[RMDB]
RNA sequence: GGGAACGACUCGAGUAGAGUCGAAAAACAACAGAUAGCUGGAACCAGCGUAGAAUUCUACGCAUAUCCAUAGCGAAUGGUACCUGUAAAGAAAAUAAUGACCGAUGUACAAGUACCAACAGCGGUCAAUGCCAUGGUGAUGUCAAUCACAUAUGCAUGACGCUAGGGGAUUCGUCCCCUAGCGUCAAAAAGAAACAACAACAACAAC
Reactivity to 2A3 in 0.01 (KOAc 150mM, MgCl2 10mM, bicine 150mM(pH8.5), 24C), signal-to-noise 1, nucleotides 027 to 156: a000c020a020a000c020a000g090a120u150a060g000c000u000g040g000a030a080c070c170a060g000c000g000u000a000g040a240a300u300u270c000u000a010c000g000c040a000u040a000u160c000c000a040u090a010g000c000g070a030a000u010g040g000u000a010c000c000u040g000u020a130a130a000g220a000a000a050a050u140a010a070u050g010a020c000c000g000a000u000g030u020a000c030a140a000g020u010a020c000c000a000a050c000a040g000c000g000g000u000c000a000a030u020g000c060c000a020u070g000g040u030g010a040u030g080u150c090a130a000u000c020a030c000a000u210a070u020g010c000a010
An RNA of 207 nucleotides, treated with 2A3 and read out base by base. The RNA was probed in 150 mM KOAc, 10 mM MgCl2 and 150 mM bicine (pH 8.5) at 24 C. The data come from the RNA Mapping Database (RMDB), library OK3TST.